[RMDB]
RNA sequence: GGGAACGACUCGAGUAGAGUCGAAAAGAUGAACUGCGUCAACAGCGAGAGGGGCGAGCUGCUGCCGCUCCCCCAUGUCCGUGCCCCUCGAUUGACGCACGCACAGCGCCAGCGGGGCAGGCAGCAGGGCAUACCCACGUUUCGACGUGGGUAUGCCAAAAGAAACAACAACAACAAC
Reactivity to 2A3 in 0.01 (KOAc 150mM, MgCl2 10mM, bicine 150mM(pH8.5), 24C), signal-to-noise 2, nucleotides 027 to 126: g120a050u210g030a110a040c050u040g000c000g030u000c010a050a060c000a190g160c080g040a060g000a010g110g000g000g000c060g010a110g010c010u030g010c000u050g000c010c000g000c030u030c000c020c000c000c000a020u080g070u020c020c050g070u070g010c020c000c000c000u000c000g070a050u020u070g000a000c010g030c000a000c030g030c010a130c020a140g070c070g030c020c010a060g010c010g000g000g000g000c020a060g000g000c020a000g000c000a000g000
Conditions: 150 mM KOAc, 10 mM MgCl2 and 150 mM bicine (pH 8.5), 24 C. Structure probing data (2A3) for a 177-nucleotide construct. The data come from the RNA Mapping Database (RMDB), library OK1LIB.